RNA sequence: GGGAACGACUCGAGUAGAGUCGAAAAGGUGAGCUGGACGGGAAGUAGGUCCAGCGACUGCUUCCGAAGCUUUGAUAAGAGCAACUCCAUCUACGUUGCUCAAGUAGGUGGUAGCAGCAAACACCGAGGGUGGUCGCAACUUCGGUUGCGAUUACCCAAAAGAAACAACAACAACAAC
Reactivity to DMS in 0.01 (KOAc 150mM, MgCl2 10mM, bicine 150mM(pH8.5), 24C), signal-to-noise 9, nucleotides 027 to 126: g000g010u000g010a120g020c000u000g000g000a030c020g010g010g020a100a170g010u030a090g020g010u010c000c000a010g000c010g000a100c000u000g000c010u000u000c000c000g010a300a220g000c010u000u010u030g020a140u040a120a160g000a010g000c000a010a020c010u020c220c180a160u050c210u040a100c190g000u000u000g000c010u000c020a010a020g010u000a020g000g010u030g000g000u010a010g000c010a010g010c110a080a070a300c010a000c000c000g000a110
Reactivity to 2A3 in 0.01 (KOAc 150mM, MgCl2 10mM, bicine 150mM(pH8.5), 24C), signal-to-noise 9, nucleotides 027 to 126: g020g000u020g010a030g000c010u010g000g010a010c030g090g080g110a140a100g120u300a070g110g040u000c000c000a000g000c000g000a010c000u000g000c000u040u000c000c000g040a100a020g010c020u090u090u140g150a170u210a220a120g000a010g010c010a000a010c010u070c090c040a200u080c070u120a080c120g020u020u020g010c000u010c020a010a000g020u030a020g020g140u180g040g000u020a000g000c000a000g000c010a040a090a010c010a000c000c000g000a110